An RNA of 177 nucleotides, treated with DMS and read out base by base. Conditions: 150 mM KOAc, 10 mM MgCl2 and 150 mM bicine (pH 8.5), 24 C.

[RMDB]
RNA sequence: GGGAACGACUCGAGUAGAGUCGAAAAGAUAUGGAACGGUGUAGACAUGCUACAGACAGACUGCCAGGAUCGGAAACGAUCCUGGCAGUCUGUCUGAAUAGCAACAGCUACACAGCGUUCCUAAGUCCAUUGACAAUAUGUUCGCAUAUUGUCAAUGAAAAGAAACAACAACAACAAC
Reactivity to DMS in 0.01 (KOAc 150mM, MgCl2 10mM, bicine 150mM(pH8.5), 24C), signal-to-noise 2, nucleotides 027 to 126: g010a080u010a300u010g010g010a010a010c010g010g020u000g010u000a010g020a100c060a230u000g010c000u000a050c000a010g020a040c010a020g000a060c000u000g070c000c000a030g000g020a070u000c000g010g000a140a080a300c010g040a020u000c030c000u000g000g010c000a000g000u000c000u010g000u000c000u010g000a040a070u010a000g010c000a020a050c300a160g020c000u010a010c010a010c000a110g010c020g010u000u010c000c000u000a020a150g010u010c060